The record gives the reactivity of an RNA of 207 nucleotides to 2A3.
Values cover nucleotides 27 to 156.
RNA sequence: GGGAACGACUCGAGUAGAGUCGAAAAGAGGUAAGUACACAAUUCUCUAAGCGAUGAGAAGCGUGUGGAAAAUUAGGGAAGGGCUACGGCUAUAAUCCUAAGAAAGCUUAUCUACAAGCGGAGGUAUAAAAGCUCGCAGCGUUCGCGCUGCGAGCAAUCUGUAACUGUUGUUCGCAACAGUUACAGAAAAAGAAACAACAACAACAAC
Reactivity to 2A3 in 0.01 (KOAc 150mM, MgCl2 10mM, bicine 150mM(pH8.5), 24C), signal-to-noise 1, nucleotides 027 to 156: g030a000g010g010u010a010a050g080u070a000c000a000c000a000a090u020u010c010u060c050u160a150a140g090c060g110a120u080g000a100g000a040a020g030c090g020u020g000u060g020g000a110a030a000a030u020u010a030g030g000g000a120a050g060g020g010c000u030a020c080g020g000c000u040a020u050a210a000u110c000c010u030a020a000g010a040a030a010g070c000u020u000a000u060c010u050a120c010a110a000g090c040g090g010a070g020g040u070a050u110a300a120a120a000g010c030u000c020g010c000a000g030c060g030u090u110c210g000c000g000c030u000g040c010g030a000g000c000a000a000